[RMDB]
RNA sequence: GGGAACGACUCGAGUAGAGUCGAAAAGCAGCGCCUACAUAACGUACAUCGAACAGCGCUUGUUGAAGCGGUCGCCAAAUCCCCUAAAGCGCCUUUCAUCGUUGAUCCCAAAAUGAUAGAGGGUCAUGUGCAGAUGUGGAAUGACUCACAUUCUGAACGAUUAGGCAAUAUUCGUAUUGCCUAAUCGAAAAGAAACAACAACAACAAC
Reactivity to 2A3 in 0.01 (KOAc 150mM, MgCl2 10mM, bicine 150mM(pH8.5), 24C), signal-to-noise 6, nucleotides 027 to 156: g090c040a010g030c000g030c020c040u140a070c090a140u230a140a120c090g120u110a060c080a160u170c100g060a110a020c030a030g010c000g010c010u030u090g030u030u050g020a050a030g030c080g040g020u240c040g010c040c010a030a120a250u160c020c000c000c010u080a100a080a000g020c010g020c000c000u040u100u020c060a090u030c040g070u050u060g030a030u020c020c000c000a040a090a020a050u220g040a030u060a060g100a100g010g010g010u020c010a040u060g010u050g050c020a010g000a050u030g030u030g020g070a110a090u120g040a030c010u020c060a030c010a070u130u000c020u020g020a080a020
Reactivity to DMS in 0.01 (KOAc 150mM, MgCl2 10mM, bicine 150mM(pH8.5), 24C), signal-to-noise 3, nucleotides 027 to 156: g020c030a080g040c040g050c010c010u000a090c060a190u010a080a140c040g020u000a150c110a140u000c040g020a070a150c180a080g020c000g000c020u000u010g030u010u000g000a100a080g020c040g010g020u010c030g070c010c020a110a110a110u010c000c000c060c020u000a060a130a120g000c050g030c010c050u000u000u010c040a070u000c020g020u000u010g020a090u000c020c020c000a110a110a070a060u000g020a140u000a070g000a070g010g030g020u000c030a110u000g040u020g030c030a080g010a140u000g020u000g020g000a130a090u000g000a160c070u010c030a030c030a220u000u000c000u010g020a130a300